[RMDB]
RNA sequence: GGGAACGACUCGAGUAGAGUCGAAAAACGGAGCGAAAGCGUUGCUCGAACAGUUAGGGCUGGGUAAACGUCUGGAUCAUCUUCCGGCACAGCUUUCCGGCGGUGAACAGCAACGAGUGGCGCUGGAGUCGGAUAAAAUAUUCGUAUUUUAUCCGACAAAAGAAACAACAACAACAAC
Reactivity to DMS in 0.01 (KOAc 150mM, MgCl2 10mM, bicine 150mM(pH8.5), 24C), signal-to-noise 7, nucleotides 027 to 126: a120c090g010g000a110g030c120g000a180a110a050g000c010g020u000u000g000c010u000c000g010a200a090c080a050g010u000u010a130g010g020g000c020u000g010g000g010u010a060a060a110c150g000u010c000u030g000g000a120u000c080a050u000c080u010u000c010c010g010g010c300a070c110a110g020c180u000u000u000c010c010g000g020c300g000g000u000g010a020a090c040a030g000c080a090a120c040g000a020g010u000g010g010c040g000c000u000g000g010a130
Reactivity to 2A3 in 0.01 (KOAc 150mM, MgCl2 10mM, bicine 150mM(pH8.5), 24C), signal-to-noise 5, nucleotides 027 to 126: a000c030g060g020a070g080c070g050a090a040a000g000c010g010u010u010g000c000u000c000g030a100a040c020a020g030u090u180a160g110g220g000c020u010g000g050g110u160a050a060a030c030g040u040c040u040g010g080a180u010c010a030u010c030u220u050c000c000g000g010c080a080c050a160g070c010u100u100u040c010c000g010g000c000g000g030u010g020a040a020c000a010g010c010a020a040c010g000a000g020u010g010g000c000g000c020u020g010g010a020
Structure probing data (DMS and 2A3) for a 177-nucleotide construct. Conditions: 150 mM KOAc, 10 mM MgCl2 and 150 mM bicine (pH 8.5), 24 C. DMS adducts were read by reverse transcription with MarathonRT. It was measured as part of the RMDB library OK2TST. For 2A3, 8,438 sequencing reads were counted. Values are in units of 0.01, from 0 to 300, in steps of 10.